Source information
Chemical mapping of a 177-nucleotide RNA with 2A3 and DMS. DMS adducts were read by reverse transcription with MarathonRT.
[RMDB]
RNA sequence: GGGAACGACUCGAGUAGAGUCGAAAAUUCAUCGACACGAUGGCCGGCUUAGAAGCCGGUGGAACCGCCGAUACGGCCGAUGCGGGUAGCGGCGGAGGCGAACUCGCGGAGGCCGACCUGAGUGACAGAUUAAUAUAGCUUUCGAGCUAUAUUAAUCAAAAGAAACAACAACAACAAC
Reactivity to 2A3 in 0.01 (KOAc 150mM, MgCl2 10mM, bicine 150mM(pH8.5), 24C), signal-to-noise 9, nucleotides 027 to 126: u070u040c020a020u030c010g100a090c050a020c170g020a030u070g040g000c000c000g000g000c020u130u150a100g040a250a010g070c010c000g000g000u010g000g020a050a040c020c020g020c010c010g060a050u090a200c010g040g000c010c000g020a020u070g010c010g000g020g040u050a090g250c060g100g020c090g050g030a060g060g050c030g020a080a040c010u010c020g010c000g000g030a030g000g030c000c000g000a000c000c000u050g050a040g030u080g040a040c040a090
Reactivity to DMS in 0.01 (KOAc 150mM, MgCl2 10mM, bicine 150mM(pH8.5), 24C), signal-to-noise 7, nucleotides 027 to 126: u020u030c080a030u000c020g000a110c070a100c100g010a100u020g000g000c000c010g010g010c000u020u060a100g000a180a180g000c010c000g000g010u010g000g010a120a140c190c050g000c060c050g010a040u010a140c040g000g000c000c010g000a300u080g000c020g000g000g010u010a150g000c020g010g000c100g010g010a060g000g010c020g010a110a080c040u000c000g010c010g000g000a300g000g000c000c000g000a020c020c010u020g000a160g010u010g000a150c190a100
The RNA was probed in 150 mM KOAc, 10 mM MgCl2 and 150 mM bicine (pH 8.5) at 24 C. Values cover nucleotides 27 to 126.